The record gives the reactivity of an RNA of 177 nucleotides to DMS.
The data come from the RNA Mapping Database (RMDB), library M2PK90.
High DMS reactivity at an A or C suggests that its Watson-Crick edge is free.
Reactivities are given for positions 27 through 126.
The reactions ran in a buffer of 150 mM KOAc, 10 mM MgCl2 and 150 mM bicine (pH 8.5), at 24 C.
RNA sequence: GGGAACGACUCGAGUAGAGUCGAAAAGUACACCCUCCCUCCCUCCCAAAAGCGCGCAAAUAAAGGGAGGGACUCAGGGAUGAGUAGGCCAAAAGGCGAUAUCCCGAAGACGCGCGACGGGACAAAAUAUUGGUUCUUGAUUCGUCAAGAACCAAUAAAAAGAAACAACAACAACAAC
Reactivity to DMS in 0.01 (KOAc 150mM, MgCl2 10mM, bicine 150mM(pH8.5), 24C), signal-to-noise 2, nucleotides 027 to 126: g060u030a130c220a110c010c020c020u000c010c020c000u000c000c000c010u000c020c000c000a030a040a190a210g000c000g010c000g020c080a070a100a090u000a080a110a160g000g010g010a020g060g000g000a000c040u030c090a040g010g000g000a080u000g000a110g020u030a060g060g000c000c020a100a070a100a240g000g010c000g000a100u000a080u000c000c010c010g000a080a130g000a100c090g010c010g010c010g000a130c090g010g000g000a070c130a070a070a080a080